[RMDB]
RNA sequence: GGGAACGACUCGAGUAGAGUCGAAAACUGUGAGGCUUCGGCCUCACAGAUAGGUUUCUUUUUAGUGAUAUUUCCAAACCCCUUUGUGCAAAAAUCAUUAAACUCGCGUACGUUUCGACGUACGCAAAUCGAUUGAUAUGUUCGCAUAUCAAUCGAUAAAAGAAACAACAACAACAAC
Reactivity to 2A3 in 0.01 (KOAc 150mM, MgCl2 10mM, bicine 150mM(pH8.5), 24C), signal-to-noise 2, nucleotides 027 to 126: c000u000g000u000g010a000g010g010c050u060u130c290g120g020c000c000u010c000a000c000a000g000a000u030a010g000g030u020u000u020c000u010u070u000u020u020a030g010u010g020a010u000a060u050u040u020c040c000a040a010a110c020c030c000c020u040u070u090g070u050g030c040a020a010a020a020a050u020c020a010u010u090a090a070a040c120u090c150g000c000g000u010a000c000g010u010u020u120c200g060a020c000g000u010a000c000g000c000a000a010
Reactivity to DMS in 0.01 (KOAc 150mM, MgCl2 10mM, bicine 150mM(pH8.5), 24C), signal-to-noise 3, nucleotides 027 to 126: c010u000g000u000g000a000g010g020c010u000u000c200g030g010c010c000u000c000a000c010a000g000a050u000a080g010g010u000u000u000c000u000u010u000u010u000a030g010u000g000a020u000a030u000u000u000c000c000a030a030a070c040c010c030c060u000u010u010g000u010g000c160a010a020a030a040a030u000c030a000u000u010a060a080a090c300u000c150g010c010g010u000a000c000g010u000u000u020c150g010a020c000g010u000a000c000g000c000a000a020
Record summary: An RNA of 177 nucleotides, treated with 2A3 and DMS and read out base by base. DMS adducts were read by reverse transcription with MarathonRT. The RNA was probed in 150 mM KOAc, 10 mM MgCl2 and 150 mM bicine (pH 8.5) at 24 C. Source: RMDB library M2PK50, as collected in RNAgym.